An RNA of 177 nucleotides, treated with DMS and 2A3 and read out base by base.
DMS adducts were read by reverse transcription with MarathonRT.
Values cover nucleotides 27 to 126.
It was measured as part of the RMDB library TTRDEL.
The reactions ran in a buffer of 150 mM KOAc, 10 mM MgCl2 and 150 mM bicine (pH 8.5), at 24 C.
For DMS, 1,963 sequencing reads were counted.
2A3 adducts were read by reverse transcription with SuperScript II with manganese.
[RMDB]
RNA sequence: GGGAACGACUCGAGUAGAGUCGAAAAGAUAUGGAACAUCUCGAGACUAUGAAGUCGGAAACGAUGGAGUCUAACGAGAGUGUUCCUAAGUCAAAUCACACUGUCGUCUUCGGACGACAGUGUGAAACUCUGGUCUAAAGUUCGCUUUAGACCAGAGAAAAGAAACAACAACAACAAC
Reactivity to DMS in 0.01 (KOAc 150mM, MgCl2 10mM, bicine 150mM(pH8.5), 24C), signal-to-noise 2, nucleotides 027 to 126: g000a030u000a300u000g000g000a000a030c000a060u000c000u000c000g020a090g010a050c010u000a220u010g010a120a280g010u000c020g020g000a120a080a150c000g030a010u000g000g030a040g020u000c000u000a120a100c010g010a030g000a030g010u000g010u000u000c000c000u010a010a090g020u010c050a090a110a170u000c000a000c000a030c010u000g010u000c000g000u000c000u000u010c220g010g010a000c000g010a010c000a000g000u000g000u010g000a010a060a100
Reactivity to 2A3 in 0.01 (KOAc 150mM, MgCl2 10mM, bicine 150mM(pH8.5), 24C), signal-to-noise 3, nucleotides 027 to 126: g020a010u070a050u140g010g000a010a000c000a030u050c000u000c010g060a050g000a000c000u030a150u300g050a030a020g000u010c010g000g050a070a060a060c010g010a000u030g030g030a010g000u020c020u050a190a120c030g000a010g020a050g090u070g000u030u010c010c000u000a120a030g090u040c040a000a000a220u040c020a010c000a000c000u010g000u000c010g000u010c000u070u130c300g070g000a000c000g000a010c010a010g000u020g000u000g000a000a000a000